[RMDB]
RNA sequence: GGGAACGACUCGAGUAGAGUCGAAAAGGCACAUUGAGAAGAAUGAUCGCUUAAAUUACUUAUUUGCAUUAAACACUUUUGCCAAGGAACACAGUGCAUUAAAACAAAGUAAAAUGGCAUCAGUUUAUAAAUAACAUUGUCUUUUACAUUAUAGAAAGAUUAAAUAGCCAUUCGUGGCUAUUUAAUCAAAAGAAACAACAACAACAAC
Reactivity to 2A3 in 0.01 (KOAc 150mM, MgCl2 10mM, bicine 150mM(pH8.5), 24C), signal-to-noise 3, nucleotides 027 to 156: g020g010c000a030c010a100u020u060g060a060g010a110a060g010a040a050u040g010a030u070c080g000c010u060u070a030a060a080u140u040a150c030u070u100a050u100u080u080g000c000a030u000u080a040a130a000c070a040c050u020u030u090u120g040c040c010a010a080g020g030a070a010c060a000c030a090g020u010g040c000a030u030u170a030a040a060a030c030a020a140a000g000u020a000a010a000a010u070g000g000c000a000u030c000a030g000u010u030u100a180u090a120a160a040u180a040a020c020a030u020u020g000u000c000u000u030u000u060a030c030a020u160u300a070u300a220g040a070a080a010
Reactivity to DMS in 0.01 (KOAc 150mM, MgCl2 10mM, bicine 150mM(pH8.5), 24C), signal-to-noise 1, nucleotides 027 to 156: g020g000c000a040c150a010u000u060g010a250g030a090a150g000a060a150u020g010a120u000c090g000c050u000u000a050a090a300u000u010a080c040u000u010a120u000u000u000g020c030a160u020u000a100a180a140c020a040c010u010u000u000u010g020c050c070a110a220g030g010a030a050c040a040c250a060g050u000g010c030a150u000u000a060a130a190a100c030a130a050a070g030u030a000a020a120a100u000g000g010c000a060u010c040a060g000u000u000u000a140u000a100a110a210u020a010a110c010a080u000u010g010u000c000u000u000u000u000a040c010a050u000u000a090u000a160g020a080a120a240
An RNA of 207 nucleotides, treated with 2A3 and DMS and read out base by base. For 2A3, 1,881 sequencing reads were counted. For 2A3 the reverse transcriptase was SuperScript II with manganese.